An RNA of 207 nucleotides, treated with 2A3 and DMS and read out base by base. High DMS reactivity at an A or C suggests that its Watson-Crick edge is free. Conditions: 150 mM KOAc, 10 mM MgCl2 and 150 mM bicine (pH 8.5), 24 C.

RNA sequence: GGGAACGACUCGAGUAGAGUCGAAAAGUUGUGUAACUUCAUUUAAAUGAAUUGAAACAAAUUUAAUACAAGAGGAUGUAGGAUAACCGUCCGUCCUUUACAUUGGUAUAAAAGUGAUCUAAAAUUCGGCAGGGACGAGUCUUCGGACUCGUCCCAACAAGAAUUAUGUCUUCGGACAUAAUUCUUGAAAAGAAACAACAACAACAAC
Reactivity to 2A3 in 0.01 (KOAc 150mM, MgCl2 10mM, bicine 150mM(pH8.5), 24C), signal-to-noise 1, nucleotides 027 to 156: g010u010u000g000u000g010u060a070a060c010u070u080c030a110u140u190u170a150a170a100u100g010a030a010u050u080g030a110a020a010c030a010a180a090u110u170u170a130a060u120a080c070a050a000g010a000g020g000a010u090g050u170a060g000g040a030u060a220a140c020c030g030u000c000c000g020u030c000c000u070u050u050a040c030a080u100u110g050g000u060a060u020a050a110a030a060g020u040g040a010u040c020u040a060a030a110a130u030u060c030g080g060c090a090g010g000g000a000c000g040a000g000u000c000u000u030c110g020g000a000c020u000c000g000u010c000c000c000a000a000
Reactivity to DMS in 0.01 (KOAc 150mM, MgCl2 10mM, bicine 150mM(pH8.5), 24C), signal-to-noise 1, nucleotides 027 to 156: g030u030u000g020u000g020u010a090a090c050u000u000c000a090u000u010u000a060a070a170u000g000a020a060u000u000g010a210a200a160c000a060a060a120u000u000u000a050a110u010a110c050a070a140g020a120g000g080a020u030g010u000a090g000g000a160u000a020a110c120c050g060u000c050c000g010u000c000c000u000u010u000a060c060a170u000u000g000g000u010a120u000a040a040a100a080g050u010g030a060u000c030u000a060a030a150a150u000u000c040g020g010c170a110g010g000g030a020c010g070a000g020u010c010u040u020c220g070g000a030c020u000c000g040u010c000c000c000a000a010
Reactivities are rounded to 0.1 and cut off at 0 and 3.